[RMDB]
RNA sequence: GGGAACGACUCGAGUAGAGUCGAAAACCAGCUUCCACUCUUUCGCUCACACGCACGGCGCCUCCCCCACAGUUCUCCGAUUCCAAUUUUCCGCAAGGAAUGUCAUCGCGACCGCCCCGCCGGUGUCCCCCUGGUACUAGUUCGCUAGUACCAGGGGAAAAGAAACAACAACAACAAC
Reactivity to DMS in 0.01 (KOAc 150mM, MgCl2 10mM, bicine 150mM(pH8.5), 24C), signal-to-noise 2, nucleotides 027 to 126: c000c020a150g020c100u010u000c040c040a060c040u000c020u000u000u040c060g020c030u000c090a070c070a090c200g050c080a060c040g010g020c030g000c030c000u000c030c060c000c020c000a140c100a090g070u020u020c000u000c010c050g020a070u000u000c000c050a150a100u000u030u020u010c040c040g050c170a080a100g020g000a020a060u010g000u000c020a070u000c080g000c050g010a050c020c020g010c000c010c040c000g000c090c010g030g020u000g000u000c100
Reactivity to 2A3 in 0.01 (KOAc 150mM, MgCl2 10mM, bicine 150mM(pH8.5), 24C), signal-to-noise 3, nucleotides 027 to 126: c000c000a010g000c050u110u040c020c010a050c020u060c010u030u170u100c060g000c010u050c030a070c020a000c050g050c020a050c050g020g020c020g010c000c000u030c000c000c000c000c000a020c020a020g040u040u000c020u000c010c020g080a080u060u010c020c010a040a090u060u040u120u040c030c020g040c100a080a010g050g020a060a030u080g050u050c020a040u010c050g030c020g060a030c000c010g030c020c010c000c010g010c010c000g000g040u020g020u060c000